[RMDB]
RNA sequence: GGGAACGACUCGAGUAGAGUCGAAAAGUGACUCGCAGGUGGAGACACGCUGUACACCGGGAAUGCAUCGAACUCGCGUUUAAGCGGUCUGUAAGGCCGUCGGCGUCCUGGGGAAGGGUCACGGAAGCUACAACGGAAGCUUCGGCUUCCGUUGUAGAAAAGAAACAACAACAACAAC
Reactivity to DMS in 0.01 (KOAc 150mM, MgCl2 10mM, bicine 150mM(pH8.5), 24C), signal-to-noise 1, nucleotides 027 to 126: g000u010g010a020c010u000c020g040c000a070g000g030u010g000g020a260g070a230c020a020c050g000c000u000g040u000a120c110a170c000c000g000g000g000a030a050u010g010c060a140u000c030g000a010a080c050u000c230g010c290g040u000u000u030a020a090g000c030g000g000u010c000u000g010u000a010a070g000g000c020c000g000u000c010g000g000c030g000u000c000c010u000g030g040g000g010a080a150g060g000g000u010c010a000c030g080g000a130a090g000